Conditions: 150 mM KOAc, 10 mM MgCl2 and 150 mM bicine (pH 8.5), 24 C. This 177-nucleotide RNA was probed chemically with DMS and 2A3. The 2A3 profile rests on 1,275 reads. High 2A3 reactivity points to a flexible backbone, as in loops and unpaired stretches. For DMS, 1,660 sequencing reads were counted. For DMS the reverse transcriptase was MarathonRT.
[RMDB]
RNA sequence: GGGAACGACUCGAGUAGAGUCGAAAACGGGAUGGCAUCCAGCAGCCCAUUAUGUGCGGAUUAAAACAUCCAUCAACGGGGCUCUUAGAGGGCGAUUAAUUGAAGCUACAAAGCUUCAGUUCAAGAGUCACACUAAGCUUUUCGAAGCUUAGUGUGAAAAAGAAACAACAACAACAAC
Reactivity to DMS in 0.01 (KOAc 150mM, MgCl2 10mM, bicine 150mM(pH8.5), 24C), signal-to-noise 3, nucleotides 027 to 126: c090g010g010g010a060u010g010g000c080a160u000c030c020a090g020c080a120g020c030c010c050a070u000u010a080u000g010u010g000c150g030g000a040u010u000a100a070a090a150c150a040u000c010c020a090u000c120a050a090c140g000g000g010g010c020u000c040u000u000a060g000a090g010g010g030c020g010a070u010u000a050a030u010u000g010a010a000g010c000u000a090c300a060a090a070g000c000u000u010c000a000g010u000u010c240a030a110g000a100g000
Reactivity to 2A3 in 0.01 (KOAc 150mM, MgCl2 10mM, bicine 150mM(pH8.5), 24C), signal-to-noise 1, nucleotides 027 to 126: c020g030g000g020a000u010g000g000c020a010u030c000c000a030g070c010a010g000c050c030c030a040u260u160a100u240g070u040g050c040g000g020a010u080u160a020a180a070a030c010a000u020c010c020a030u060c020a030a120c060g020g020g080g000c020u000c020u060u130a100g030a100g120g030g000c080g040a050u100u130a030a010u030u040g000a010a000g000c000u060a100c180a090a240a010g000c000u050u000c000a000g030u000u070c020a020a030g050a030g110